[RMDB]
RNA sequence: GGGAACGACUCGAGUAGAGUCGAAAAGCUAUGGAUGCAGUUCAACGACUAAACGGUGAUGGGCUAGCGUAAUGAAUGCGUUCUGCACACUCUUACGCCGGCUUAAGAUAUAGUCUACUCCCACUCCGAAAGGAGGGGUACUAAAAGCUCUUAAGGUUACCCUUGAUGAGUUCGCUCAUCAAGGGUAAAAAGAAACAACAACAACAAC
Reactivity to 2A3 in 0.01 (KOAc 150mM, MgCl2 10mM, bicine 150mM(pH8.5), 24C), signal-to-noise 1, nucleotides 027 to 156: g090c080u110a090u050g050g010a020u080g000c040a030g000u090u110c010a140a030c000g080a020c040u100a110a110a190c140g010g010u080g020a110u120g040g000g040c020u000a010g000c020g000u010a050a000u080g030a130a300u000g000c020g150u270u180c180u300g000c000a000c000a000c000u000c000u010u000a000c000g030c020c000g040g020c000u060u000a030a000g000a000u030a050u000a020g010u000c040u050a010c020u060c010c000c040a110c000u020c000c000g040a110a000a000g000g000a000g030g020g000g010u000a020c110u180a000a000a020a100g020c050u010c020u120u050a060a000g180g000u060